[RMDB]
RNA sequence: GGGAACGACUCGAGUAGAGUCGAAAAUCGCCUCUUUCAUGUCGUCCGUUGAACCGCCAGAUGUACCGACGACGUGCGUGCUGUUGUAAUGGACGUUGUAGAAAUUAAACGGCACUUUGAAAUUAUACGUAUCCCUCCUGUUCGCAGGAGGGAUACGAAAAGAAACAACAACAACAAC
Reactivity to DMS in 0.01 (KOAc 150mM, MgCl2 10mM, bicine 150mM(pH8.5), 24C), signal-to-noise 2, nucleotides 027 to 126: u050c100g000c030c000u000c220u000u020u070c010a020u020g060u000c070g000u140c050c100g000u000u040g000a030a160c050c080g070c020c160a090g010a150u000g050u040a010c010c190g020a070c040g020a110c040g040u000g020c200g020u010g000c000u010g000u040u030g040u000a080a080u000g000g010a180c050g000u000u010g020u050a040g000a080a160a030u040u000a010a000a040c000g010g020c020a020c000u000u010u010g000a110a040a040u040u050a090u030a070
Reactivity to 2A3 in 0.01 (KOAc 150mM, MgCl2 10mM, bicine 150mM(pH8.5), 24C), signal-to-noise 3, nucleotides 027 to 126: u230c130g110c100c000u150c090u040u160u070c060a030u010g020u020c000g000u000c010c000g060u030u050g100a060a050c050c010g180c050c030a080g000a150u190g020u120a020c000c020g020a010c000g000a020c000g040u060g000c040g020u010g020c010u000g060u070u000g170u030a010a010u000g020g100a050c080g040u000u060g000u050a020g070a010a020a000u040u040a150a060a000c010g030g000c030a010c000u040u040u060g120a070a080a050u270u150a120u010a080